[RMDB]
RNA sequence: GGGAACGACUCGAGUAGAGUCGAAAACUCCAACUCUUGUAAAUAUUCUAUCUAAUAUUGGAAUAUCAGCAGACUCUGCUGGUACAAAUGAGCCUAUAUGUGCCAUAAGAGCUAUUAUAGCAGUUUGACGUGAGGACCUAUUCGUAGGUCCUCACGUAAAAGAAACAACAACAACAAC
Reactivity to 2A3 in 0.01 (KOAc 150mM, MgCl2 10mM, bicine 150mM(pH8.5), 24C), signal-to-noise 2, nucleotides 027 to 126: c050u070c020c000a070a020c020u060c010u070u020g160u110a030a060a030u100a080u060u030c030u050a100u000c010u110a050a090u030a300u290u120g050g000a070a000u000a000u050c010a000g020c010a020g040a300c090u010c010u210g000c000u020g000g000u050a010c070a000a050a020u090g040a000g020c030c060u000a000u020a020u110g030u060g030c000c030a060u050a180a090g000a010g010c010u020a010u160u000a090u100a080g090c210a080g020u010u110u240g080

Structure probing data (2A3) for a 177-nucleotide construct. The reactions ran in a buffer of 150 mM KOAc, 10 mM MgCl2 and 150 mM bicine (pH 8.5), at 24 C. Source: RMDB library OK1LIB, as collected in RNAgym. Values cover nucleotides 27 to 126.